Chemical mapping of a 177-nucleotide RNA with DMS and 2A3. The reactions ran in a buffer of 150 mM KOAc, 10 mM MgCl2 and 150 mM bicine (pH 8.5), at 24 C.

RNA sequence: GGGAACGACUCGAGUAGAGUCGAAAACUUUAAUGGAGAGUUUACAAGCAAGUGCAACUCUUGUGCCUGUGGUGUAGAUUAUAACGAUGAAUUGAAAAGCAAUAACGACUAUAUGAUAGUUAUGGAACAUUAUUAAUUACUUCGGUAAUUAAUAAUGAAAAGAAACAACAACAACAAC
Reactivity to DMS in 0.01 (KOAc 150mM, MgCl2 10mM, bicine 150mM(pH8.5), 24C), signal-to-noise 5, nucleotides 027 to 126: c030u000u010u010a070a110u010g020g010a100g030a070g010u000u010u000a060c070a140a300g000c060a050a050g030u000g010c080a050a160c110u000c110u000u000g010u010g000c040c020u000g020u000g020g000u010g010u000a020g000a030u000u010a060u010a070a100c090g010a080u000g000a080a060u000u010g000a050a060a070a110g010c050a060a030u020a060a090c070g020a050c040u000a050u000a080u010g000a080u000a030g010u000u000a080u010g000g010a070a150
Reactivity to 2A3 in 0.01 (KOAc 150mM, MgCl2 10mM, bicine 150mM(pH8.5), 24C), signal-to-noise 3, nucleotides 027 to 126: c010u140u150u160a090a060u190g010g000a040g000a020g140u050u050u050a030c040a090a000g030c010a050a020g000u020g070c020a020a050c020u060c000u160u010g020u020g050c010c020u060g030u060g060g100u070g010u030a030g000a060u030u090a110u090a170a030c030g040a060u070g120a040a150u170u130g030a050a090a030a000g120c020a010a040u170a060a020c040g150a000c040u050a030u020a060u300g090a080u060a040g010u040u030a060u120g050g000a080a000